[RMDB]
RNA sequence: GGGAACGACUCGAGUAGAGUCGAAAAAAAUGCAAGCUCUGGAAAUUCGUUAAUGUAUUUGAUGUCUUAGUGUUUUAGUGACUAGGGAGACCAUUAACUAGUUUAUCAUUAACCACUUAUCAGUGUAUCCACUGCUAUCUUUCGAGAUAGCAGUGGAAAAAGAAACAACAACAACAAC
Reactivity to DMS in 0.01 (KOAc 150mM, MgCl2 10mM, bicine 150mM(pH8.5), 24C), signal-to-noise 1, nucleotides 027 to 126: a050a030a040u020g010c100a100a160g010c040u000c030u030g000g070a020a050a060u000u000c090g000u000u000a040a020u010g000u020a090u010u000u010g000a080u010g000u000c020u000u010a030g000u000g000u020u000u000u040a110g020u000g000a010c010u000a100g000g000g000a010g000a140c200c060a000u000u000a090a020c040u000a020g000u000u000u000a080u010c000a070u000u000a030a070c180c020a040c040u000u000a080u000c160a070g000u000g000u000a220